[RMDB]
RNA sequence: GGGAACGACUCGAGUAGAGUCGAAAAGCCGGUAGCGAAACUCUAGGUGCAUGCCGAGUUGGUAACAGAACUCGUAAAUCCACUGUUGCAACUUUUAUAGUUGCCAAUGACGAAAACUACGGCGCGGAGUACAAGCUGGCUGCGUAAGCAGUCCUCUACCGUUGUUACUGUUCGCAGUAACAACGGUAAAAGAAACAACAACAACAAC
Reactivity to 2A3 in 0.01 (KOAc 150mM, MgCl2 10mM, bicine 150mM(pH8.5), 24C), signal-to-noise 1, nucleotides 027 to 156: g020c010c070g000g180u110a000g000c020g050a120a060a050c010u080c050u110a120g210g000u130g020c040a050u110g070c050c020g010a000g000u010u000g020g010u100a080a010c020a030g020a030a000c020u010c050g120u140a080a070a050u020c060c010a020c010u000g080u050u030g000c000a010a000c000u130u000u100u160a300u190a160g000u010u070g030c000c020a160a240u130g010a040c050g030a000a020a030a080c020u110a070c000g010g000c050g000c030g020g030a030g040u070a050c030a110a020g010c040u010g030g000c000u010g000c000g010u010a150a000g020c020a000g000u000c000c040u060c010u010